[RMDB]
RNA sequence: GGGAACGACUCGAGUAGAGUCGAAAAGAGUUGGCAGAGGCGUACCGGCGGGGUAUUCCUACCCUUACCUACCCAGAAGCGCUGGGGGACAUUUCCUGUGCGCGGUUUUCGUGUGGUAUUGCAGGUGCGUGCAUAGCGGAUUCGUCCGCUAUGCACGAAAAGAAACAACAACAACAAC
Reactivity to DMS in 0.01 (KOAc 150mM, MgCl2 10mM, bicine 150mM(pH8.5), 24C), signal-to-noise 2, nucleotides 027 to 126: g000a070g000u010u010g000g040c180a120g000a110g040g010c030g030u010a010c020c000g010g020c100g000g050g010g030u000a030u000u030c040c080u010a090c010c010c000u000u010a030c090c110u010a060c050c000c030a120g010a180a090g000c020g010c010u000g000g020g010g020g020a120c050a130u040u010u000c000c000u010g010u040g040c010g020c040g000g030u000u050u020u020c120g000u020g000u000g000g000u000a020u020u030g000c040a040g000g000u010g040
Reactivity to 2A3 in 0.01 (KOAc 150mM, MgCl2 10mM, bicine 150mM(pH8.5), 24C), signal-to-noise 2, nucleotides 027 to 126: g070a020g050u060u060g030g000c100a010g030a060g120g000c000g020u040a020c000c050g050g010c050g020g060g000g010u030a050u070u090c020c030u060a020c000c000c000u010u030a070c000c000u040a080c000c000c020a050g040a100a060g010c080g000c010u050g070g010g020g000g000a020c060a240u050u150u040c030c000u000g070u100g000c020g000c060g030g020u030u040u050u070c070g030u120g020u030g050g030u070a070u040u240g010c020a000g000g040u030g010

The data come from the RNA Mapping Database (RMDB), library OK1LIB. An RNA of 177 nucleotides, treated with DMS and 2A3 and read out base by base. For DMS the reverse transcriptase was MarathonRT. The reactions ran in a buffer of 150 mM KOAc, 10 mM MgCl2 and 150 mM bicine (pH 8.5), at 24 C. Reactivities are given for positions 27 through 126. Values are in units of 0.01, from 0 to 300, in steps of 10. For DMS, 3,032 sequencing reads were counted. For 2A3, 912 sequencing reads were counted.